Overview:
An RNA of 207 nucleotides, treated with DMS and 2A3 and read out base by base. The reactions ran in a buffer of 150 mM KOAc, 10 mM MgCl2 and 150 mM bicine (pH 8.5), at 24 C.
RNA sequence: GGGAACGACUCGAGUAGAGUCGAAAAAACGUCUUCGGACGUUGAUCCGCGUACUACACGAAGAAGUAGAGCAUCGAUCUGGAGGCCAUUCCCAAAUAGGAAUGGUGAAGGGGAGCUCUACGUAACGUGUAUCGCCUAAGUGCAGUUUCGACUGCAAACCAUCAAUGCGGUUCGCCGCAUUGAUGGUAAAAGAAACAACAACAACAAC
Reactivity to DMS in 0.01 (KOAc 150mM, MgCl2 10mM, bicine 150mM(pH8.5), 24C), signal-to-noise 1, nucleotides 027 to 156: a020a010c000g030u000c000u030u050c160g050g010a050c000g020u000u000g000a060u010c000c030g010c020g010u000a100c150u000a000c030a030c000g010a050a090g030a110a300g070u000a010g000a050g030c020a200u000c220g000a060u000c040u000g000g030a300g020g010c030c000a080u000u000c000c000c010a040a100a290u020a070g000g030a010a000u000g030g030u010g010a300a300g000g000g010g000a080g020c010u000c000u000a000c000g050u000a010a230c000g000u000g000u000a020u000c130g080c000c010u000a050a100g030u000g010c000a010g000u000u000u030c140g030a130c030u010g040c000a010a070
Reactivity to 2A3 in 0.01 (KOAc 150mM, MgCl2 10mM, bicine 150mM(pH8.5), 24C), signal-to-noise 2, nucleotides 027 to 156: a000a000c030g000u040c070u020u050c300g230g000a000c000g020u020u000g000a020u160c000c000g010c000g000u030a130c020u030a010c010a040c050g300a300a040g010a050a000g040u000a000g000a000g030c050a300u300c010g030a010u000c000u020g020g030a120g300g000c000c000a000u000u060c000c030c000a220a300a020u150a090g000g010a000a010u000g010g140u190g040a010a000g000g030g030g000a040g000c000u000c000u000a000c000g000u000a010a000c090g020u000g040u000a170u300c000g000c020c000u110a210a070g020u010g000c020a010g000u000u000u210c230g120a040c010u020g000c000a010a090